[RMDB]
RNA sequence: GGGAACGACUCGAGUAGAGUCGAAAACAGGCUGGUCUCUAGCCUACUUUUUUGAGACAAGGUCUUGCUCUGUCACCCAGGCUGGAUAGAGUGCAGUAGUGCAGUCACAGCUCACUGCAGCCUCCACCAGGAGGCCUGCUUUCGAGCAGGCCUCCUGAAAAGAAACAACAACAACAAC
Reactivity to 2A3 in 0.01 (KOAc 150mM, MgCl2 10mM, bicine 150mM(pH8.5), 24C), signal-to-noise 2, nucleotides 027 to 126: c070a000g000g000c020u050g040g000u050c010u000c020u080a030g010c020c000u050a160c060u130u220u140u060u100u080g050a020g000a000c030a040a050g080g000u030c020u050u060g020c010u030c020u090g090u060c010a060c020c020c000a030g030g000c030u040g000g020a060u050a110g090a040g040u120g010c030a000g000u170a000g010u010g020c080a000g080u120c080a040c040a160g020c000u010c010a020c000u010g000c000a040g060c000c010u030c010c010a060c000
Reactivity to DMS in 0.01 (KOAc 150mM, MgCl2 10mM, bicine 150mM(pH8.5), 24C), signal-to-noise 2, nucleotides 027 to 126: c160a080g020g050c010u000g000g000u000c020u070c010u000a080g000c010c010u000a040c020u020u030u010u000u000u040g010a050g000a030c070a130a180g010g010u010c030u030u020g000c030u000c030u020g010u030c070a080c110c040c010a120g000g000c080u020g000g000a150u030a060g020a080g040u030g000c060a040g000u040a110g000u010g000c080a030g000u020c110a080c220a130g000c000u000c010a030c000u030g010c000a060g000c000c030u000c010c080a090c270